This 207-nucleotide RNA was probed chemically with 2A3 and DMS. Values cover nucleotides 27 to 156.

[RMDB]
RNA sequence: GGGAACGACUCGAGUAGAGUCGAAAAACGCUUCACAAUGUGCGGCAAAGAAACAUUGUUUAUGCAAAGGCACUUCGCAAUGUGUGUUCAAACAUUGCUUAUUCAAACACGCUUCACAAUGUGCGACAAAACUUCACGGUCUUCGGACCGUGAAGAAGAGCCUAAAUUUGUUCGCAAAUUUAGGCUCAAAAGAAACAACAACAACAAC
Reactivity to 2A3 in 0.01 (KOAc 150mM, MgCl2 10mM, bicine 150mM(pH8.5), 24C), signal-to-noise 6, nucleotides 027 to 156: a010c010g010c000u020u010c010a010c000a010a020u010g010u000g010c010g050g040c090a100a080a070g090a010a050a000c010a020u010u010g110u030u090u110a100u110g050c060a060a060a050g100g000c010a010c020u050u040c060g010c010a020a030u020g000u000g000u010g040u070u190c040a050a060a020c010a020u020u040g030c000u060u070a140u110u100c060a040a080a020c030a010c080g060c030u130u160c070a030c060a130a140u170g030u030g070c020g060a040c110a030a110a070a050c010u010u000c000a000c000g000g000u010c010u020u050c060g020g000a000c000c000g000u010g000a000a000g000a000a000
Reactivity to DMS in 0.01 (KOAc 150mM, MgCl2 10mM, bicine 150mM(pH8.5), 24C), signal-to-noise 1, nucleotides 027 to 156: a040c030g050c000u000u030c030a040c040a000a010u000g000u010g050c000g050g000c000a090a080a080g000a040a000a010c000a020u000u000g050u000u000u000a060u000g020c040a040a080a180g010g000c020a070c040u000u010c080g000c110a070a060u000g040u010g030u020g040u000u010c050a040a080a050c060a050u000u000g000c080u000u000a020u000u000c090a080a090a070c040a030c030g010c040u000u010c120a070c100a080a070u000g020u000g000c010g000a150c040a100a080a110a100c000u010u000c000a020c000g000g080u020c000u010u000c300g050g010a040c000c000g010u000g010a000a000g000a050a070